[RMDB]
RNA sequence: GGGAACGACUCGAGUAGAGUCGAAAACGUCUUAAAUUAAAUUUCCCUUGCUGAGCUCAUCUCAGCAAACAAUAACUAAUAACAAAUAAGAACAGCAGGGAAGGUUGUUCUUAUUUGUUACAAUUAAACCGCCAUUAUAGUUCGCUAUAAUGGCGGUAAAAGAAACAACAACAACAAC
Reactivity to 2A3 in 0.01 (KOAc 150mM, MgCl2 10mM, bicine 150mM(pH8.5), 24C), signal-to-noise 1, nucleotides 027 to 126: c010g040u040c060u100u100a240a190a200u120u220a180a040a040u100u210u000c000c000c040u060u020g040c000u000g040a010g000c140u140c210a240u110c100u060c030a000g000c000a030a000a000c030a050a070u220a060a080c030u160a020a190u030a020a010c000a020a020a000u010a000a000g000a000a020c010a000g050c020a030g140g090g130a070a000g060g000u000u000g000u000u000c000u000u000a000u000u000u010g000u000u000a000c010a010a000u020u070a030a130
Chemical mapping of a 177-nucleotide RNA with 2A3. For 2A3 the reverse transcriptase was SuperScript II with manganese. The RNA was probed in 150 mM KOAc, 10 mM MgCl2 and 150 mM bicine (pH 8.5) at 24 C. The 2A3 profile rests on 751 reads. The data come from the RNA Mapping Database (RMDB), library M2PK90. Reactivities are given for positions 27 through 126.